[RMDB]
RNA sequence: GGGAACGACUCGAGUAGAGUCGAAAAUUUAAUCAUGCUUCUCGGGCAGGCAUGUGAGAAUGAAUUGUUUAUAUAUCCUGAGUAUGAUGCCAGAUCUUGUAGUGGUGAUGUGUAACUGGUGUCUGAGGGCUCAUCCAACAUUCGUGUUGGAUGAGCCAAAAGAAACAACAACAACAAC
Reactivity to DMS in 0.01 (KOAc 150mM, MgCl2 10mM, bicine 150mM(pH8.5), 24C), signal-to-noise 1, nucleotides 027 to 126: u000u010u000a080a190u000c030a010u000g000c020u000u010c040u000c100g000g000g020c130a050g000g000c010a030u000g010u010g000a300g000a010a050u000g000a050a140u000u000g020u000u000u030a070u000a100u010a070u060c020c060u000g020a100g000u010a080u000g010a020u000g020c010c000a050g030a120u000c110u000u010g010u000a120g000u000g000g000u000g010a080u020g030u010g000u000a070a200c060u000g000g010u000g000u010c000u020g010a190g000
Structure probing data (DMS) for a 177-nucleotide construct. The data come from the RNA Mapping Database (RMDB), library OK2TRN. The DMS profile rests on 1,090 reads. The reactions ran in a buffer of 150 mM KOAc, 10 mM MgCl2 and 150 mM bicine (pH 8.5), at 24 C. For DMS the reverse transcriptase was MarathonRT.